Chemical mapping of a 177-nucleotide RNA with DMS and 2A3. For DMS the reverse transcriptase was MarathonRT. For 2A3 the reverse transcriptase was SuperScript II with manganese. The 2A3 profile rests on 2,506 reads. Reactivities are given for positions 27 through 126.

RNA sequence: GGGAACGACUCGAGUAGAGUCGAAAAGAUAUGGACAAUUUAGACAUGAAACUCAUAUCGGAAACGAUAUAGUUUCAACAGCUAAUUUGUCCUAAGUCAAAGUCCACACGGUUCGCCGUGUGGACAACUAAGUAGACCUCUUCGGAGGUCUACUUAGAAAAGAAACAACAACAACAAC
Reactivity to DMS in 0.01 (KOAc 150mM, MgCl2 10mM, bicine 150mM(pH8.5), 24C), signal-to-noise 2, nucleotides 027 to 126: g000a040u010a050u010g000g020a020c000a010a000u000u000u000a000g000a010c040a270u000g030a010a010a010c000u000c300a050u000a010u000c010g010g020a020a020a020c000g000a000u000a010u000a010g020u000u000u000c010a060a020c240a110g000c010u000a000a010u000u000u010g010u000c010c000u000a000a050g000u000c020a140a120a180g000u000c000c000a010c000a000c030g020g010u010u030c300g030c000c010g000u000g010u000g010g010a000c010a000a060
Reactivity to 2A3 in 0.01 (KOAc 150mM, MgCl2 10mM, bicine 150mM(pH8.5), 24C), signal-to-noise 1, nucleotides 027 to 126: g000a000u020a000u040g030g000a010c010a020a000u000u030u010a070g010a130c300a300u300g000a010a010a010c010u140c090a040u010a010u030c000g000g000a020a010a010c010g000a000u000a000u000a020g050u000u050u030c030a040a010c100a010g010c000u000a020a010u000u050u000g010u000c000c000u000a000a000g030u000c010a070a070a200g000u050c030c010a010c000a000c000g020g110u080u100c300g050c210c010g010u000g000u000g010g000a010c010a020a000